[RMDB]
Record summary
This 177-nucleotide RNA was probed chemically with 2A3 and DMS. In probing experiments dimethyl sulfate is read out at A N1 and C N3, which are open when not base-paired. 2A3 adducts were read by reverse transcription with SuperScript II with manganese.
RNA sequence: GGGAACGACUCGAGUAGAGUCGAAAAAUGGAAGUACUGCAAACGUAAAGGUAUACAAACAGGGCUCAAACAUUGGAACUGUAAGUGGUAACUAUUCUACUACUCCAUAUGGAAAUCCAUCUAUGGCGACAUCUCUUUACUUCGGUAAAGAGAUGUCAAAAGAAACAACAACAACAAC
Reactivity to 2A3 in 0.01 (KOAc 150mM, MgCl2 10mM, bicine 150mM(pH8.5), 24C), signal-to-noise 5, nucleotides 027 to 126: a000u140g010g010a050a050g030u020a010c060u070g060c080a130a090a050c070g040u110a080a070a040g090g010u050a090u030a140c020a000a080a010c020a030g000g050g000c020u070c090a070a110a080c060a100u070u160g040g000a040a040c020u030g010u080a130a090g010u010g010g010u020a060a030c010u040a110u160u070c040u050a050c010u020a010c020u010c000c010a040u040a130u120g110g020a010a080a050u040c010c010a040u040c020u100a150u110g060g020c020
Reactivity to DMS in 0.01 (KOAc 150mM, MgCl2 10mM, bicine 150mM(pH8.5), 24C), signal-to-noise 2, nucleotides 027 to 126: a020u040g030g000a050a090g010u000a010c060u030g020c160a090a080a070c090g040u020a040a100a090g010g000u010a060u080a100c120a100a150a020c020a050g030g010g010c050u010c080a090a040a050c170a070u000u000g000g020a090a050c110u000g000u010a050a080g040u020g030g020u000a010a040c140u020a060u020u000c010u000a030c100u000a040c020u000c050c000a020u030a030u030g000g020a100a100a140u040c000c040a000u020c050u020a030u010g000g020c300
Overview
The DMS profile rests on 2,744 reads. The RNA was probed in 150 mM KOAc, 10 mM MgCl2 and 150 mM bicine (pH 8.5) at 24 C.